[RMDB]
RNA sequence: GGGAACGACUCGAGUAGAGUCGAAAAGGUUAACAAGCCAUGGGGGCGGUUUGUCUGCGCAUCAUCAGAUGUGUCAUCCUGUGCGGUGCCACACACGUUCUGCCAUGGUCCGUCAACGCUGUCAAGGGACUAUUGCUGCAUUCGUGCAGCAAUAGUCAAAAGAAACAACAACAACAAC
Reactivity to 2A3 in 0.01 (KOAc 150mM, MgCl2 10mM, bicine 150mM(pH8.5), 24C), signal-to-noise 5, nucleotides 027 to 126: g040g010u050u060a040a030c030a040a070g000c000c020a020u040g000g000g000g010g010c020g010g010u070u150u150g050u000c010u050g050c040g020c060a050u020c000a010u040c010a040g030a050u040g080u020g060u140c050a050u080c030c030u070g060u120g120c140g000g040u020g010c050c000a010c000a010c000a000c040g010u130u120c030u080g130c000c000a020u030g020g020u020c000c010g050u060c010a040a060c070g010c130u030g060u120c080a100a090g140g050
Reactivity to DMS in 0.01 (KOAc 150mM, MgCl2 10mM, bicine 150mM(pH8.5), 24C), signal-to-noise 3, nucleotides 027 to 126: g010g000u000u000a070a120c090a140a250g000c000c000a100u030g010g010g000g000g000c070g000g000u000u020u020g010u000c030u010g000c120g040c010a060u010c060a160u030c090a030g020a090u000g040u010g000u010c130a060u000c110c020u000g070u000g010c160g010g000u020g000c080c030a070c040a000c140a110c030g000u040u000c020u000g020c010c030a040u000g030g010u020c080c190g000u000c030a030a080c060g000c010u000g000u020c050a200a130g020g020